[RMDB]
RNA sequence: GGGAACGACUCGAGUAGAGUCGAAAAUUCCAUUUGAGUAUCCUGAAAACGGGCUUUUCAGCAUGGAACGUACAUAUUAAAUAGUAGGAGUGCAUAGUGGCCCGUAUAGCAGGCAUUAACAUGCCUGAAAACGUGAAAAGGUUCGCCUUUUCACGAAGCGAACAUAUAUGUUCGCAUAUAUGUUCGCAAAAGAAACAACAACAACAAC
Reactivity to DMS in 0.01 (KOAc 150mM, MgCl2 10mM, bicine 150mM(pH8.5), 24C), signal-to-noise 2, nucleotides 027 to 156: u000u000c010c000a150u010u000u000g010a190g030u000a120u010c030c000u000g010a070a060a100a090c030g030g010g040c030u000u000u040u000c050a180g040c090a050u000g010g020a140a070c040g000u000a190c040a110u010a180u010u000a070a110a280u010a100g030u000a090g010g010a260g030u000g040c040a100u000a120g010u000g020g000c000c000c010g020u000a060u010a140g000c010a010g020g030c000a040u000u000a110a080c190a180u000g000c000c010u000g000a030a020a070a100c000g020u000g000a010a020a020a020g010g020u000u000c300g030c020c000u010u000u000u000c000a010c020g000a020a080
Reactivity to 2A3 in 0.01 (KOAc 150mM, MgCl2 10mM, bicine 150mM(pH8.5), 24C), signal-to-noise 5, nucleotides 027 to 156: u050u010c010c000a030u120u070u130g080a100g060u110a090u120c030c050u110g100a050a080a040a060c010g000g010g010c020u120u170u110u130c060a020g000c010a010u040g080g050a210a050c030g060u060a010c040a040u140a090u160u300a160a160a150u150a080g060u010a000g000g140a080g020u010g000c020a050u070a180g120u060g010g010c000c000c010g000u030a010u020a010g010c000a000g010g000c000a000u010u010a020a020c020a040u010g010c010c000u000g000a010a060a000a020c000g000u010g000a000a000a000a000g030g000u030u040c110g140c020c000u000u000u000u000c000a000c000g000a030a000